This 207-nucleotide RNA was probed chemically with 2A3. It was measured as part of the RMDB library M2RFPK. 2A3 adducts were read by reverse transcription with SuperScript II with manganese.
RNA sequence: GGGAACGACUCGAGUAGAGUCGAAAAGUCUCCUAGAGAGCUUGGCCGUCGGGCCUUACACCCCGACUUACUGAGUUUCUCUAGGAGAGUCCCUUUCCCAGCCAGAGGUGGCUGGUCAAACAAUACCAAAACUCUUGCUAGUUCGCUAGCAAGAGAAGUAUAACUUCCACUUCGGUGGAAGUUAUACAAAAGAAACAACAACAACAAC
Reactivity to 2A3 in 0.01 (KOAc 150mM, MgCl2 10mM, bicine 150mM(pH8.5), 24C), signal-to-noise 2, nucleotides 027 to 156: g030u010c000u000c010c000u000a000g000a000g000a000g010c000u010u010g010g020c040c000g000u000c000g000g020g020c040c000u040u090a040c070a020c000c000c010c020g000a000c010u070u220a020c010u010g010a000g010u210u300u060c000u000c000u000a000g000g000a000g000a000g000u000c000c000c000u030u100u020c020c010c000a000g010c000c000a000g000a020g000g010u000g000g000c010u090g010g060u250c050a000a010a050c070a080a030u010a010c000c010a010a110a050a040c000u000c000u000u000g000c000u000a000g020u060u070c210g000c050u000a000g010c000a000a000g000a000g000a020a000